[RMDB]
RNA sequence: GGGAACGACUCGAGUAGAGUCGAAAACACGCUGCUCUGGGCGGAAGAUUCUUCUGACACUUCUAGCCUAUUCAGCUUCGCGUCCUUGAGGCCUGGCGUAACGCGGCUCUUGCCACCAGGAUGCCUCCGCUAGUCGAGCGGACUUGGUCUCUUCCCCCAUCUUAUCCGCGUUCGCGCGGAUAAGAUGAAAAGAAACAACAACAACAAC
Reactivity to DMS in 0.01 (KOAc 150mM, MgCl2 10mM, bicine 150mM(pH8.5), 24C), signal-to-noise 1, nucleotides 027 to 156: c030a070c030g020c010u010g070c000u010c040u010g000g010g040c000g000g000a030a020g010a300u000u000c060u010u020c200u010g000a200c090a280c030u000u000c010u000a120g050c010c000u010a010u000u000c030a080g080c020u000u010c020g020c010g000u000c020c070u020u030g010a070g040g000c030c050u000g020g000c020g070u010a090a070c170g030c040g000g040c020u000c130u000u010g050c090c000a070c030c010a090g000g000a090u010g010c030c020u010c010c030g030c050u000a160g030u010c160g010a120g050c020g030g000a050c020u010u000g000g050u000c000u000c060u010u000c000c000c130c120
Reactivity to 2A3 in 0.01 (KOAc 150mM, MgCl2 10mM, bicine 150mM(pH8.5), 24C), signal-to-noise 3, nucleotides 027 to 156: c110a030c090g000c000u010g000c000u000c000u010g000g000g000c010g040g010a020a020g030a110u180u070c040u250u060c150u300g080a040c040a010c090u010u000c010u020a120g000c000c010u000a000u060u110c010a000g000c000u030u060c050g000c020g020u000c040c000u030u090g010a010g020g000c000c010u010g000g000c030g080u130a130a090c170g010c020g100g000c010u020c000u040u070g040c070c040a130c020c020a040g020g020a090u180g010c000c020u030c000c000g000c010u060a110g230u300c170g080a030g000c000g000g000a010c020u080u160g010g000u000c010u000c000u010u010c020c000c000c000